[RMDB]
RNA sequence: GGGAACGACUCGAGUAGAGUCGAAAAGUACUAAGCCCGCCAUUAUUGAUGCAUGCUCCACCUCCCACUCCUUAAUAGUUGCUUUGAAGUUUCCUUUCGGUGGGUUCUGCAGCGUCUUUAUCAGAAAUACAUUAAAUUUCUUCGGAAAUUUAAUGUAAAAAGAAACAACAACAACAAC
Reactivity to DMS in 0.01 (KOAc 150mM, MgCl2 10mM, bicine 150mM(pH8.5), 24C), signal-to-noise 2, nucleotides 027 to 126: g010u020a100c070u000a100a160g020c010c000c020g010c060c090a100u020u000a070u000u010g000a010u010g010c040a080u000g010c000u000c040c020a070c030c030u010c010c020c010a140c070u010c040c040u000u000a060a080u000a130g000u000u000g020c070u000u010u000g010a050a180g000u010u000u000c010c010u010u000u010c080g000g040u000g010g010g020u000u000c100u000g020c050a030g010c040g020u010c020u000u000u010a040u000c070a090g010a100a060a070
Structure probing data (DMS) for a 177-nucleotide construct.
Conditions: 150 mM KOAc, 10 mM MgCl2 and 150 mM bicine (pH 8.5), 24 C.